[RMDB]
RNA sequence: GGGAACGACUCGAGUAGAGUCGAAAAACUCACUUCGGUGAGUACAGAUGCGUACUACCUAAGAGGGAUAUAAGACAGUAUGCGGUCCCAAAUAGGACCGGUACAAUGACGUAUCCUACCCACCUUAGGUAUCGCCCAACCCUCUCUUCGGAGAGAAGGGAUACUCUGUAUUCGUACAGAGUAUCCCAAAAGAAACAACAACAACAAC
Reactivity to DMS in 0.01 (KOAc 150mM, MgCl2 10mM, bicine 150mM(pH8.5), 24C), signal-to-noise 1, nucleotides 027 to 156: a000c000u000c000a020c010u000u040c270g010g050u000g000a030g020u000a050c090a160g030a080u010g000c040g030u000a080c080u000a000c000c000u000a020a070g020a220g030g020g000a030u000a010u000a110a180g050a250c010a090g050u000a000u000g070c100g040g050u000c000c000c020a000a290a180u020a010g000g070a010c000c010g000g000u000a020c010a260a160u000g010a150c210g000u000a090u000c000c010u000a030c000c000c060a300c070c040u000u000a000g000g000u000a030u000c020g000c000c060c020a100a140c100c090c000u000c000u000c110u000u020c250g010g010a050g000a050g000a080a080
Reactivity to 2A3 in 0.01 (KOAc 150mM, MgCl2 10mM, bicine 150mM(pH8.5), 24C), signal-to-noise 4, nucleotides 027 to 156: a000c000u010c000a010c010u030u060c260g170g000u000g000a000g020u020a010c060a030g150a060u180g000c000g030u050a080c050u000a000c040c010u020a000a000g010a020g010g000g010a000u010a000u020a070a070g100a100c050a070g020u030a020u220g300c010g000g000u020c020c020c060a050a290a060u300a030g000g000a000c000c000g010g010u000a010c060a080a180u080g010a010c050g000u000a000u000c000c000u040a120c040c030c040a090c010c000u000u000a000g000g070u040a050u300c010g010c010c000c000a010a060c020c000c000u000c010u000c010u030u090c210g090g000a010g000a010g000a040a180
An RNA of 207 nucleotides, treated with DMS and 2A3 and read out base by base. The reactions ran in a buffer of 150 mM KOAc, 10 mM MgCl2 and 150 mM bicine (pH 8.5), at 24 C. The 2A3 profile rests on 2,982 reads. DMS adducts were read by reverse transcription with MarathonRT. The DMS profile rests on 1,506 reads.